[RMDB]
The record gives the reactivity of an RNA of 177 nucleotides to DMS and 2A3. The RNA was probed in 150 mM KOAc, 10 mM MgCl2 and 150 mM bicine (pH 8.5) at 24 C. For 2A3, 9,747 sequencing reads were counted. For DMS, 6,365 sequencing reads were counted. For 2A3 the reverse transcriptase was SuperScript II with manganese. DMS adducts were read by reverse transcription with MarathonRT.

RNA sequence: GGGAACGACUCGAGUAGAGUCGAAAAUGGCACAUUUGUUAAGUUUUCAAAUGGGCCUAACUCUGCCACAUAUAUAAUAUCGGAGAUGGCAAAGGCUUGUGACGGAGAUAUCUCUCUUAAGCCUUUCGAGUAUGGUAUAGUUCGCUAUACCAUACUCAAAAGAAACAACAACAACAAC
Reactivity to DMS in 0.01 (KOAc 150mM, MgCl2 10mM, bicine 150mM(pH8.5), 24C), signal-to-noise 5, nucleotides 027 to 126: u000g010g010c010a020c000a010u000u000u000g010u000u000a110a170g030u010u000u000u010c000a000a010a010u000g000g000g010c000c010u010a050a080c040u000c030u010g010c010c010a040c050a140u010a100u020a090u010a110a100u000a120u000c120g010g020a140g010a160u010g000g000c060a070a030a020g010g000c020u000u000g010u000g000a050c180g010g000a020g000a130u020a080u000c080u000c130u000c060u000u010a040a050g000c030c000u000u000u000c100
Reactivity to 2A3 in 0.01 (KOAc 150mM, MgCl2 10mM, bicine 150mM(pH8.5), 24C), signal-to-noise 7, nucleotides 027 to 126: u030g000g000c010a010c000a020u010u020u010g030u040u090a300a300g070u120u100u090u100c000a000a010a000u000g010g000g000c000c000u010a050a020c010u030c030u050g030c030c010a020c040a010u130a010u050a000u040a190a240u120a110u200c090g140g000a110g040a140u020g030g000c000a050a010a000g010g010c010u040u020g050u070g090a070c120g040g030a010g010a040u170a210u170c070u000c000u000c010u050u060a010a000g000c000c000u010u030u090c070